This 177-nucleotide RNA was probed chemically with 2A3 and DMS. Values cover nucleotides 27 to 126. 2A3 adducts were read by reverse transcription with SuperScript II with manganese.
RNA sequence: GGGAACGACUCGAGUAGAGUCGAAAAGACAAAUGCAGCAUAUUAGGCUAAGCAGGAAAGGGACGGUAGCUCCUGGUGUCAGUUCAUACGGUGUGAUGCAUCUGCGUCGUGCACACAUGCUCCCAAAGCCCUCUCAUAUGUUCGCAUAUGAGAGGGCAAAAGAAACAACAACAACAAC
Reactivity to 2A3 in 0.01 (KOAc 150mM, MgCl2 10mM, bicine 150mM(pH8.5), 24C), signal-to-noise 1, nucleotides 027 to 126: g050a020c050a010a090a030u060g000c000a000g000c010a040u060a100u300u180a100g050g000c030u080a150a000g030c000a010g070g000a090a020a000g050g030g040a010c010g070g010u070a000g030c000u060c000c040u030g080g020u040g020u030c050a030g060u090u060c040a030u050a190c120g040g040u010g000u000g040a110u030g010c000a030u010c020u120g010c010g120u120c020g010u050g010c010a010c000a000c000a030u030g020c020u000c030c000c000a030a040a000
Reactivity to DMS in 0.01 (KOAc 150mM, MgCl2 10mM, bicine 150mM(pH8.5), 24C), signal-to-noise 2, nucleotides 027 to 126: g000a080c060a070a170a060u000g010c040a050g000c020a020u000a120u000u000a090g020g010c040u000a100a110g020c010a040g010g000a040a120a020g000g020g030a050c060g000g000u020a050g030c070u000c030c010u020g010g040u010g010u000c040a080g000u010u000c090a070u010a130c110g010g000u000g000u000g010a080u000g000c010a020u010c090u010g010c090g010u000c090g030u000g000c010a020c040a030c070a050u000g000c050u000c000c000c000a050a120a160